[RMDB]
RNA sequence: GGGAACGACUCGAGUAGAGUCGAAAAGUGACAAAUGAAAGUAAAUGAGCGGACUGAAUCCAUUAACCACGCUUACUUUCUGCAAAUUAAACAUGGCCUUUAGUAUGCAACGCUCAAUGCGCUCGGACCACCCAUUAGGAUUCGUCCUAAUGGGUGGAAAAGAAACAACAACAACAAC
Reactivity to DMS in 0.01 (KOAc 150mM, MgCl2 10mM, bicine 150mM(pH8.5), 24C), signal-to-noise 3, nucleotides 027 to 126: g000u010g010a120c120a050a030a050u020g010a020a030a040g000u010a030a100a160u010g000a050g020c030g030g010a090c080u000g000a090a240u020c050c040a080u000u030a110a140c080c050a050c120g000c040u000u000a040c020u000u000u010c010u010g000c110a030a070a060u020u000a040a030a030c080a080u010g000g020c130c070u010u040u000a030g010u000a040u000g000c030a050a080c040g000c000u000c030a060a060u000g020c060g030c080u000c050g000g000a230
Reactivity to 2A3 in 0.01 (KOAc 150mM, MgCl2 10mM, bicine 150mM(pH8.5), 24C), signal-to-noise 2, nucleotides 027 to 126: g090u050g030a040c030a040a080a090u110g030a000a050a010g010u050a030a110a170u110g040a020g040c040g020g040a000c040u080g050a010a050u030c050c000a000u080u100a030a040c020c020a030c020g000c010u010u000a020c000u030u020u010c010u010g000c030a010a060a200u100u090a070a100a040c070a110u090g060g000c000c000u070u070u020a040g030u020a020u110g000c020a080a000c020g010c010u020c010a030a060u090g010c040g020c030u030c060g000g010a040